[RMDB]
RNA sequence: GGGAACGACUCGAGUAGAGUCGAAAACGCGGAGUCUGGCCUAGACUGCAAGGCCGGCCGUGCAGUCCUGAGGCGAACCGUGGGGUGGGCGCGGCAGGAGUCUGAGUGAUCCGUAGUGGGCACUGGACGCGCCUGUACGUGAGGCGGGUCUGGUCCAAUUUAAUAGGACUUUCGAGUCCUAUUAAAUAAAAGAAACAACAACAACAAC
Reactivity to DMS in 0.01 (KOAc 150mM, MgCl2 10mM, bicine 150mM(pH8.5), 24C), signal-to-noise 2, nucleotides 027 to 156: c070g000c010g010g000a090g010u010c030u000g040g020c020c020u000a090g010a090c040u000g030c030a090a050g010g030c040c060g020g030c020c000g020u000g030c020a100g000u000c000c010u010g010a110g000g030c070g000a070a070c000c040g030u000g010g000g030g060u000g010g010g000c040g010c030g010g000c030a090g010g010a090g030u000c040u010g030a150g030u000g000a090u000c040c010g020u010a110g020u000g000g010g020c060a060c030u000g020g020a030c020g000c040g060c010c010u000g040u000a060c120g020u000g000a090g010g000c030g010g010g010u000c010u000g020g020u010c010c010a080
Reactivity to 2A3 in 0.01 (KOAc 150mM, MgCl2 10mM, bicine 150mM(pH8.5), 24C), signal-to-noise 3, nucleotides 027 to 156: c030g000c030g010g030a070g130u070c050u130g080g000c010c010u050a070g040a140c070u080g050c050a050a010g040g000c040c020g010g010c010c000g010u030g010c020a010g030u030c020c020u080g050a030g010g050c050g020a090a080c020c010g040u070g000g040g000g030u090g010g040g020c020g000c010g070g000c010a010g010g040a030g020u040c020u070g020a020g060u070g050a100u040c020c020g000u040a050g080u130g020g010g000c100a020c030u030g010g000a040c050g020c010g000c190c000u030g070u110a060c050g040u110g090a010g000g000c000g000g080g000u010c020u020g000g010u000c000c000a010